[RMDB]
RNA sequence: GGGAACGACUCGAGUAGAGUCGAAAAUGCGAUAUUCGUAUCGCAAAAAAUCCUAAGUCGAGGCAACAGCCCACGGGAGCUGAUGACCUAUCGGAAACGAUAGCAAGGCUCAGUGGGACAUGCCUCGAUAUGGAAAAAAGAACCAUUCGUGGUUCAAGAGGAAACUUAGUUUCGACUAAGUUUCCUCAAAAGAAACAACAACAACAAC
Reactivity to DMS in 0.01 (KOAc 150mM, MgCl2 10mM, bicine 150mM(pH8.5), 24C), signal-to-noise 1, nucleotides 027 to 156: u020g000c000g060a000u000a020u000u000c250g000u000a030u000c020g040c000a010a020a020a030a080a140u000c010c000u000a050a300g070u000c000g000a010g030g010c000a040a000c070a100g000c020c000c010a030c030g000g040g010a010g000c000u000g010a170u000g010a060c300c010u010a000u000c010g030g000a220a090a230c000g030a010u000a040g000c070a020a230g000g020c000u010c010a020g100u000g020g040g030a000c060a280u000g030c010c000u030c000g000a000u000a110u010g000g000a010a030a000a150a060a190g000a030a060c030c000a070u000u010c130g140u000g060g040u000u000c010a070a190
Reactivity to 2A3 in 0.01 (KOAc 150mM, MgCl2 10mM, bicine 150mM(pH8.5), 24C), signal-to-noise 3, nucleotides 027 to 156: u090g000c000g000a010u020a040u040u060c150g040u030a010u030c010g000c030a000a000a000a000a000a130u070c040c000u050a150a000g030u000c000g010a000g000g000c010a100a030c070a220g020c010c080c010a000c020g300g230g000a000g000c020u030g020a240u110g070a150c010c000u000a000u000c010g020g060a100a050a010c010g000a000u010a000g010c040a150a280g010g000c000u000c010a000g000u000g000g000g030a020c000a020u010g000c000c020u010c000g000a000u000a010u000g000g060a000a050a030a030a010a060g020a000a000c010c040a000u120u150c250g080u070g010g010u030u050c060a040a050